[RMDB]
RNA sequence: GGGAACGACUCGAGUAGAGUCGAAAAAUUGCAGGUCAGGGUCCAGCUGAUGCAGAGAUGAAUUAUUCGCUGUGAAACUUUAGCCAAGCAACCAAACUGUCACAUGCUGUGUCUAAGAACUGAUACUUGCAGUCCAAAACUCAUUACCAAGUAUGUACAGUGAUCCUAUGUUCGCAUAGGAUCACUGAAAAGAAACAACAACAACAAC
Reactivity to 2A3 in 0.01 (KOAc 150mM, MgCl2 10mM, bicine 150mM(pH8.5), 24C), signal-to-noise 5, nucleotides 027 to 156: a000u070u030g000c000a010g000g020u000c000a010g060g000g030u000c020c010a010g000c040u080g010a170u070g000c040a010g010a010g010a060u130g050a050a130u140u090a080u160u130c070g000c040u040g040u080g170a110a080a090c080u140u130u120a030g010c030c010a060a020g030c020a010a020c010c030a070a080a070c030u080g060u170c020a020c020a100u110g010c020u010g030u010g010u160c020u070a090a060g030a170a150c010u010g000a030u110a230c030u050u040g000c000a000g010u030c010c000a010a050a090a100c090u120c060a090u040u150a060c040c010a000a070g060u070a060u140g020u050a040
Reactivity to DMS in 0.01 (KOAc 150mM, MgCl2 10mM, bicine 150mM(pH8.5), 24C), signal-to-noise 2, nucleotides 027 to 156: a010u000u010g020c010a070g040g010u000c030a130g000g010g030u010c000c000a070g010c130u010g000a090u000g010c020a020g050a180g030a110u010g030a110a150u000u000a190u000u000c060g000c070u000g050u000g020a100a030a070c040u000u000u020a020g000c000c030a140a180g030c030a040a030c040c020a050a060a090c040u000g000u000c020a050c040a150u010g040c000u000g000u000g050u000c020u000a110a110g000a020a050c030u000g000a130u000a040c070u000u000g000c000a040g020u020c050c050a080a090a080a050c070u000c040a050u010u000a090c030c040a040a100g020u000a060u010g000u000a120
Structure probing data (2A3 and DMS) for a 207-nucleotide construct. High DMS reactivity at an A or C suggests that its Watson-Crick edge is free. For DMS, 2,915 sequencing reads were counted. The RNA was probed in 150 mM KOAc, 10 mM MgCl2 and 150 mM bicine (pH 8.5) at 24 C.